[RMDB]
RNA sequence: GGGAACGACUCGAGUAGAGUCGAAAACGUGCCUGUGCGCAACUAGAUAUGGCUGUUUCCCAUGAGGACUCCCAUAUUUAGUAGAGAUUGAAGAGGAACAGGCAUGAUAAUUCAAUCUCGCCGUGUGUCUAGGUUGGGUCUUCGGGCCCAGCCUAGAAAAAGAAACAACAACAACAAC
Reactivity to DMS in 0.01 (KOAc 150mM, MgCl2 10mM, bicine 150mM(pH8.5), 24C), signal-to-noise 5, nucleotides 027 to 126: c030g020u000g000c010c000u000g000u000g000c260g020c140a170a050c000u000a010g000a000u000a000u000g000g000c160u010g010u000u030u010c000c000c050a150u060g010a200g010g020a060c010u010c300c000c000a000u000a010u000u000u000a000g020u000a080g000a010g000a020u010u020g000a050a030g020a130g010g000a140a060c020a010g010g010c010a040u020g010a070u040a060a070u000u020c010a020a020u000c000u010c000g010c150c120g020u020g000u020g000
Reactivity to 2A3 in 0.01 (KOAc 150mM, MgCl2 10mM, bicine 150mM(pH8.5), 24C), signal-to-noise 9, nucleotides 027 to 126: c010g010u000g000c000c000u020g010u060g020c100g000c100a030a020c000u000a000g010a000u000a000u000g020g000c070u070g040u040u080u050c010c000c020a110u300g040a270g010g000a000c000u010c000c000c000a000u000a010u000u010u010a010g000u050a040g010a000g010a030u060u130g040a050a040g070a110g200g080a060a010c010a000g000g010c010a010u000g010a020u060a060a050u040u060c030a010a020u010c010u010c020g060c060c070g100u130g020u030g030